[RMDB]
RNA sequence: GGGAACGACUCGAGUAGAGUCGAAAAAUCGGCCCGUUCGCGGGCCGAUACAGGCGGAGGCUCGCACCUAGCGACCGGCCCAAGGACGCACGGUACUGCGAAUUGACUGUGGAUUCGUCCACAGUAAGCAUGUGAUAAAAUUCGUUUUAUCACAUGCAAAAGAAACAACAACAACAAC
Reactivity to DMS in 0.01 (KOAc 150mM, MgCl2 10mM, bicine 150mM(pH8.5), 24C), signal-to-noise 7, nucleotides 027 to 126: a020u000c010g020g020c010c000c000g030u000u010c180g010c030g040g010g020c000c000g000a000u000a010c130a100g000g020c050g000g020a140g010g010c120u000c040g030c050a090c080c060u000a180g010c020g000a080c040c020g000g010c010c020c030a090a100g000g000a100c060g010c020a050c110g010g000u020a060c150u000g010c040g010a090a110u000u010g010a030c000u000g010u000g000g000a040u000u020c180g000u000c000c000a010c000a010g000u000a030a120
Reactivity to 2A3 in 0.01 (KOAc 150mM, MgCl2 10mM, bicine 150mM(pH8.5), 24C), signal-to-noise 5, nucleotides 027 to 126: a000u010c000g010g000c020c040c000g020u020u020c220g010c020g070g010g010c000c000g000a000u000a010c010a010g060g000c030g050g120a060g070g000c050u000c050g000c010a060c010c070u030a030g020c010g030a040c020c020g070g010c020c010c010a030a040g070g010a020c030g000c020a030c040g060g050u100a100c090u070g020c020g060a080a090u120u180g060a020c000u000g000u010g000g000a010u020u050c180g060u010c030c000a010c000a000g010u000a010a050
Source: RMDB library M2PK50, as collected in RNAgym. An RNA of 177 nucleotides, treated with DMS and 2A3 and read out base by base. The 2A3 profile rests on 11,613 reads.